Chemical mapping of a 177-nucleotide RNA with 2A3 and DMS. Source: RMDB library OK2TST, as collected in RNAgym. For 2A3, 684 sequencing reads were counted. The reactions ran in a buffer of 150 mM KOAc, 10 mM MgCl2 and 150 mM bicine (pH 8.5), at 24 C.

RNA sequence: GGGAACGACUCGAGUAGAGUCGAAAAGAUGGUAAUAAUUUGAGAUUCAAGUUUUCAUCAAGUGAUUUCGAAAGCACCUGUCACAUUGUGGAUGGGUACAAUGGGCUUGACAUGGCUUGGGCUCCAAUCUCGACAGUACAUUCGUGUACUGUCGAGAAAAAGAAACAACAACAACAAC
Reactivity to 2A3 in 0.01 (KOAc 150mM, MgCl2 10mM, bicine 150mM(pH8.5), 24C), signal-to-noise 1, nucleotides 027 to 126: g030a070u130g070g060u160a110a050u130a160a130u140u100u140g020a070g000a070u000u080c040a040a010g010u010u050u030u030c040a070u010c000a000a000g000u010g120a300u080u070u190c070g070a140a000a040g030c050a010c000c000u000g010u000c020a040c060a130u210u240g170u220g030g000a000u010g020g000g070u000a000c010a000a020u060g030g110g060c010u010u010g050a060c070a130u190g010g000c010u000u010g040g000g000c020u000c010c010a040a070
Reactivity to DMS in 0.01 (KOAc 150mM, MgCl2 10mM, bicine 150mM(pH8.5), 24C), signal-to-noise 1, nucleotides 027 to 126: g010a150u030g030g010u000a090a070u000a020a080u010u000u030g000a060g010a130u000u000c020a000a000g000u000u000u030u010c120a150u010c060a030a020g020u000g000a210u020u000u000c110g010a160a100a100g010c000a010c020c000u020g000u010c010a020c020a200u000u020g070u020g000g000a030u000g000g000g020u000a010c030a060a080u000g000g010g030c020u000u000g000a020c180a150u000g000g000c040u000u000g000g000g000c050u010c010c190a050a080